An RNA of 177 nucleotides, treated with 2A3 and DMS and read out base by base. DMS (dimethyl sulfate) methylates the pairing face of unpaired adenines and cytosines. Source: RMDB library OK2TST, as collected in RNAgym. Reactivities are given for positions 27 through 126. The reactions ran in a buffer of 150 mM KOAc, 10 mM MgCl2 and 150 mM bicine (pH 8.5), at 24 C.
RNA sequence: GGGAACGACUCGAGUAGAGUCGAAAAAUGGCGGAGGCCCAGGCCGCCCCACAUCUUGGUGAACCCUGGCUGGAAGGGCAGGCAGGAGCGAGACGGGUAUCUGGAGUCUGCAGUGCCUCGCGCAGCCUACGUGCUGCAGUUUCGACUGCAGCACGUAAAAAGAAACAACAACAACAAC
Reactivity to 2A3 in 0.01 (KOAc 150mM, MgCl2 10mM, bicine 150mM(pH8.5), 24C), signal-to-noise 1, nucleotides 027 to 126: a000u070g060g000c010g020g040a000g030g000c060c020c000a000g000g080c000c010g030c010c000c000c000a180c030a060u010c040u060u090g150g020u100g080a090a090c020c020c000u000g010g030c000u040g140g030a150a140g220g080g060c000a010g050g000c000a000g040g000a030g050c000g040a020g000a040c070g030g050g030u070a040u090c070u110g120g040a120g020u020c010u040g010c050a010g040u020g140c000c000u000c010g000c000g020c040a040g020c000c000
Reactivity to DMS in 0.01 (KOAc 150mM, MgCl2 10mM, bicine 150mM(pH8.5), 24C), signal-to-noise 1, nucleotides 027 to 126: a150u000g030g000c050g030g000a030g000g000c010c010c040a060g000g010c020c030g000c040c000c060c090a060c160a150u010c040u000u000g000g070u000g000a110a240c140c000c010u000g010g000c000u000g010g000a170a140g000g000g020c020a040g020g010c020a020g010g010a080g000c030g030a120g010a050c120g010g010g000u000a050u010c070u000g030g000a120g010u000c040u000g020c080a120g020u000g000c000c000u030c020g000c080g010c050a070g020c000c000